Notes: Structure probing data (DMS and 2A3) for a 177-nucleotide construct. It was measured as part of the RMDB libraries RFM100 and RFMREP. The RNA was probed in 150 mM KOAc, 10 mM MgCl2 and 150 mM bicine (pH 8.5) at 24 C. For 2A3 the reverse transcriptase was SuperScript II with manganese. Reactivities are given for positions 27 through 126.

[RMDB]
RNA sequence: GGGAACGACUCGAGUAGAGUCGAAAAAGGAGUUUUCUUCCGCAAUGACUAAUAAAAAAGUAGUUCGCGUUGUCGUUAUCUUAAUGCUAAUCGCGAUUGUAUUAUCCAGCGUUUUAACCGGGGUAUUGUUUUACUAUACGUUCGCGUAUAGUAAAACAAAAGAAACAACAACAACAAC
Reactivity to DMS in 0.01 (KOAc 150mM, MgCl2 10mM, bicine 150mM(pH8.5), 24C), signal-to-noise 2, nucleotides 027 to 126: a090g010g020a090g010u010u020u030u000c050u000u000c010c010g000c100a110a070u010g030a060c030u000a020a100u030a000a070a150a050a070a100g040u010a080g010u010u010c010g020c110g000u000u010g010u040c050g010u000u000a060u010c080u010u010a060a020u010g000c030u000a030a090u010c130g000c050g000a060u000u000g010u010a050u010u020a010u000c050c050a110g000c050g020u000u010u020u010a060a140c120c020g000g000g000g000u010a120u000u010
Reactivity to 2A3 in 0.01 (KOAc 150mM, MgCl2 10mM, bicine 150mM(pH8.5), 24C), signal-to-noise 1, nucleotides 027 to 126: a020g110g020a060g010u150u040u000u030c020u070u010c000c010g010c050a020a090u090g040a030c020u100a030a140u150a170a170a020a000a030a020g120u110a060g000u010u010c000g000c000g010u000u080g000u020c010g000u030u060a120u120c070u070u090a090a050u130g010c070u050a080a050u110c000g000c000g100a040u000u090g090u060a150u130u050a000u020c000c020a040g040c080g050u000u070u060u150a080a050c030c040g020g000g000g010u050a120u010u000